[RMDB]
RNA sequence: GGGAACGACUCGAGUAGAGUCGAAAAGAAAGAAAGAAAGCUGGCCCUUCUGCUGACGGAUCUUGUGGAGCACCACAGUGCAGAAGGGGAGAGAAGCUUUAAUGCCGACCGUCUGGGCAGCCUUGAAAAAACGGAUUCUUCUUCGGAAGAAUCCGAAUCAAUAGCAUGUCUUCGGACAUGCUAUUGAAAAAGAAACAACAACAACAAC
Reactivity to 2A3 in 0.01 (KOAc 150mM, MgCl2 10mM, bicine 150mM(pH8.5), 24C), signal-to-noise 1, nucleotides 027 to 156: g080a010a020a010g050a060a060a000g050a020a020a020g000c060u120g090g050c000c010c000u000u020c010u010g050c020u060g030a010c040g020g030a090u120c050u130u110g000u020g020g030a090g080c110a070c080c000a000c000a050g030u020g050c000a020g020a010a000g000g000g020g000a000g000a000g020a040a000g010c000u040u090u030a120a110u080g010c000c020g020a030c000c040g020u000c010u060g020g010g000c000a020g020c010c010u100u070g120a110a040a000a000a010a030c020g010g000a000u000u010c000u000u000c000u010u040c120g060g000a000a000g000a000a000u000c000c000g000a000a000
Reactivity to DMS in 0.01 (KOAc 150mM, MgCl2 10mM, bicine 150mM(pH8.5), 24C), signal-to-noise 2, nucleotides 027 to 156: g000a100a080a060g030a110a090a130g030a110a030a050g020c000u010g000g010c000c010c010u000u000c000u000g000c010u000g010a180c000g010g020a080u000c060u000u000g040u010g020g030a230g020c180a120c030c010a060c010a080g010u000g040c000a020g010a050a010g010g020g010g000a030g000a140g000a110a100g020c030u000u000u010a040a070u000g010c000c010g030a070c030c020g010u000c040u000g010g000g030c030a070g010c040c070u030u000g000a010a040a060a180a110a210c030g060g020a030u010u000c010u010u000c000u000u000c300g030g000a000a020g010a010a010u000c010c000g010a010a040
An RNA of 207 nucleotides, treated with 2A3 and DMS and read out base by base. 2A3 adducts were read by reverse transcription with SuperScript II with manganese. It was measured as part of the RMDB library M2RFPK.